This 207-nucleotide RNA was probed chemically with 2A3.
RNA sequence: GGGAACGACUCGAGUAGAGUCGAAAAGGGGGCGUUACGGUUUCGACGGGGAUAGUUGAAGCUGUAGAAGCGUACCGAGGUUCCUACAGGCCUCGUUAAACAGGUAGGAAAACAAUACUCGCAAACGACUACGAGUACGCAUUAGCCGCUUAGUCGGGGUCUAAGACGUGUUCGCACGUCUUAGACCAAAAGAAACAACAACAACAAC
Reactivity to 2A3 in 0.01 (KOAc 150mM, MgCl2 10mM, bicine 150mM(pH8.5), 24C), signal-to-noise 1, nucleotides 027 to 156: g070g000g000g000g020c000g000u030u050a010c050g000g080u010u000u020c000g010a000c030g030g000g010g170a110u100a140g020u000u020g000a010a000g010c010u010g000u010a020g040a100a020g000c020g000u040a060c010c010g000a000g000g020u050u010c000c000u000a000c000a000g090g100c000c020u050c040g100u050u070a010a010a010c040a000g020g000u020a000g010g000a010a110a000a000c110a020a050u110a080c020u080c080g050c050a120a160a050c040g030a020c010u030a030c030g030a010g030u020a040c030g020c010a060u070u170a030g040c030c030g010c050u000u000a000g030u010c050g000g000

Notes
Values cover nucleotides 27 to 156. Source: RMDB library RSTRND, as collected in RNAgym.